[RMDB]
Source: RMDB library OK1LIB, as collected in RNAgym. An RNA of 177 nucleotides, treated with 2A3 and read out base by base. The RNA was probed in 150 mM KOAc, 10 mM MgCl2 and 150 mM bicine (pH 8.5) at 24 C.

RNA sequence: GGGAACGACUCGAGUAGAGUCGAAAAAUGAGACCACGAACUGGCUGUGGGCUUUUUUAGCCCGCGAUAAGAAACCCAGGAUGUGUUCCCGGGAGGAAUUUAUUGGAAAAGUCAACAGUAAUGCCGCCCCGCCAAAUUGAUUCGUCAAUUUGGCGGGAAAAGAAACAACAACAACAAC
Reactivity to 2A3 in 0.01 (KOAc 150mM, MgCl2 10mM, bicine 150mM(pH8.5), 24C), signal-to-noise 1, nucleotides 027 to 126: a000u260g050a020g030a060c000c010a010c010g060a050a040c040u040g050g000c000u020g030u000g020g020g000c040u110u210u030u000u100u080a000g000c000c000c000g030c010g040a110u190a060a210g060a110a000a000c000c020c000a000g000g000a050u230g010u000g040u040u030c000c000c000g030g040g000a120g030g060a140a020u110u010u000a130u300u180g080g000a000a040a000a150g110u090c010a020a000c000a100g000u030a040a090u040g000c000c000g030c020